[RMDB]
RNA sequence: GGGAACGACUCGAGUAGAGUCGAAAAGACACGAAAAUAGGAUAGUACGCGCGGCGAUGCAGCAUCCUCAGUAGCGAAUACAGGCAGCGUAGGGUGAGCGCCGCGUCGUCCUCGCCGCUCGCCCGCCAGUAGCGGAUACGUUCGCGUAUCCGCUACUAAAAGAAACAACAACAACAAC
Reactivity to 2A3 in 0.01 (KOAc 150mM, MgCl2 10mM, bicine 150mM(pH8.5), 24C), signal-to-noise 1, nucleotides 027 to 126: g060a000c030a000c180g050a040a080a060a160u170a060g030g030a010u040a100g040u050a070c040g000c000g000c010g030g000c010g030a040u080g080c040a040g020c020a020u030c000c030u020c020a120g040u190a030g060c040g030a100a020u210a140c120a110g190g000c050a000g050c060g140u120a030g000g000g000u020g000a010g050c000g060c000c060g000c000g010u010c000g010u000c020c000u050c010g000c000c000g010c050u020c020g010c000c000c020g050c000c000
Reactivity to DMS in 0.01 (KOAc 150mM, MgCl2 10mM, bicine 150mM(pH8.5), 24C), signal-to-noise 1, nucleotides 027 to 126: g020a110c120a070c080g000a070a040a080a110u000a040g000g000a060u000a090g040u000a050c080g020c110g030c020g000g000c010g000a230u000g020c100a170g020c040a040u000c020c000u000c150a060g020u000a060g000c040g000a090a050u000a100c080a080g000g000c060a140g000c040g010u030a030g010g010g020u000g000a060g020c000g000c040c040g020c010g010u000c020g010u000c020c040u000c030g000c030c010g000c020u000c020g040c040c000c000g020c110c010
Description: Structure probing data (2A3 and DMS) for a 177-nucleotide construct. Conditions: 150 mM KOAc, 10 mM MgCl2 and 150 mM bicine (pH 8.5), 24 C. 2A3 adducts were read by reverse transcription with SuperScript II with manganese. It was measured as part of the RMDB library OK2TST. The 2A3 profile rests on 1,362 reads. Reactivities are rounded to 0.1 and cut off at 0 and 3.